Source information: The record gives the reactivity of an RNA of 177 nucleotides to 2A3 and DMS. For DMS, 11,142 sequencing reads were counted. The data come from the RNA Mapping Database (RMDB), library M2PK50. For DMS the reverse transcriptase was MarathonRT.

RNA sequence: GGGAACGACUCGAGUAGAGUCGAAAAAACUACUUCUUCGGAAGUAGUUAUUGCGAGGGUCUAAUAAGCCCAAGGUGCCAGGUUCGACCCUUGCUGGGCGCAUCACCGACCGAUUCGUCGGUCGGAAUACUACGCUAAGAUUCGUCUUAGCGUAGUAAAAAGAAACAACAACAACAAC
Reactivity to 2A3 in 0.01 (KOAc 150mM, MgCl2 10mM, bicine 150mM(pH8.5), 24C), signal-to-noise 4, nucleotides 027 to 126: a000a000c010u010a010c000u010u000c000u020u030c300g060g000a000a000g010u000a000g000u000u020a120u080u100g010c000g010a000g000g010g000u000c020u040a050a070u080a290a070g030c000c010c030a020a040g100g010u090g020c000c010a060g140g000u050u120c040g020a000c000c010c000u010u010g010c030u020g050g040g020c060g010c020a040u080c060a030c010c000g000a000c000c000g010a020u030u050c210g020u000c000g110g000u000c020g000g000a000a000
Reactivity to DMS in 0.01 (KOAc 150mM, MgCl2 10mM, bicine 150mM(pH8.5), 24C), signal-to-noise 6, nucleotides 027 to 126: a020a010c000u010a010c000u000u000c000u000u020c190g030g000a020a010g010u000a000g010u000u000a020u000u000g010c020g010a040g000g000g010u000c010u000a090a070u010a120a140g010c010c000c040a070a110g030g020u000g000c000c050a140g010g010u000u000c150g010a030c000c000c010u000u000g010c010u000g000g000g010c080g010c070a080u010c120a210c000c000g010a010c000c000g000a020u000u000c170g010u000c000g010g000u000c000g000g010a060a030